[RMDB]
RNA sequence: GGGAACGACUCGAGUAGAGUCGAAAAUCUUCUUUCCCUUCUCUCGUCUUCUUCGGUCAACCUCCGAAGUUCCUCUUCCUCUUCCCUGCUGAGGGACUUUCCCCCGGAGGAGAGCUGCCUCUUCUUGCUAGAGUUAAGUUCGCUUAACUCAAAAGAAACAACAACAACAAC
Reactivity to DMS in 0.01 (KOAc 150mM, MgCl2 10mM, bicine 150mM(pH8.5), 24C), signal-to-noise 9, nucleotides 027 to 129: u010c050u020u010c040u010u020u020c030c030c010u000u000c020u010c030u010c050g000u010c050u000u000c000u030u000c080g010g000u000c070a120a190c040c020u030c020c040g000a080a060g020u000u010c040c020u000c030u010u000c030c040u000c090u020u010c020c020c030u010g000c050u020g010a040g000g010g010a020c080u020u010u010c000c010c000c010c040g030g010a010g030g000a030g000a070g010c110u040g010c050c020u010c040u040u020c030u010u010g040c100u020a120
Reactivity to 2A3 in 0.01 (KOAc 150mM, MgCl2 10mM, bicine 150mM(pH8.5), 24C), signal-to-noise 9, nucleotides 027 to 129: u030c020u140u010c000u030u050u030c010c010c000u070u030c050u000c000u010c030g080u000c020u080u000c000u030u030c050g020g020u070c060a080a070c030c010u030c010c020g040a050a030g010u010u010c000c000u020c000u030u020c010c020u050c010u030u030c000c000c000u000g010c020u030g030a030g010g010g010a010c000u030u050u050c000c010c000c000c010g020g010a020g020g000a020g010a010g020c060u090g050c000c000u030c000u060u010c010u030u080g040c050u080a050